[RMDB]
RNA sequence: GGGAACGACUCGAGUAGAGUCGAAAAAUUGGUCCGAUCGAAACUAUGCGCUCGUAAAGAUCGACCACGAAGCUACAUCGUAUGAAAAAUUAAUCAAAAUCACGUCCAAUGUCGAAGUGCCGGUUUCAUGGAACGUUUGGACGGGAGACGUAGGAGAACGCCUGUUUCAAUUCGUUGAAACAGGCGUAAAAGAAACAACAACAACAAC
Reactivity to 2A3 in 0.01 (KOAc 150mM, MgCl2 10mM, bicine 150mM(pH8.5), 24C), signal-to-noise 1, nucleotides 027 to 156: a010u100u060g010g020u120c200c020g000a000u030c020g040a060a040a160c010u140a140u150g070c060g060c060u050c140g080u140a120a160a000g000a000u000c000g000a000c000c000a000c010g030a010a000g050c040u000a040c030a060u080c020g040u050a070u160g060a060a000a000a110a060u110u270a130a080u100c010a030a110a000a070u040c020a000c080g020u000c000c000a000a030u050g000u050c020g050a120a000g000u090g070c140c020g010g020u030u300u000c090a070u110g020g010a160a000c000g010u000u020u030g000g000a000c000g010g000g000a060g000a010c100g060u030a010g010g100a070g010a080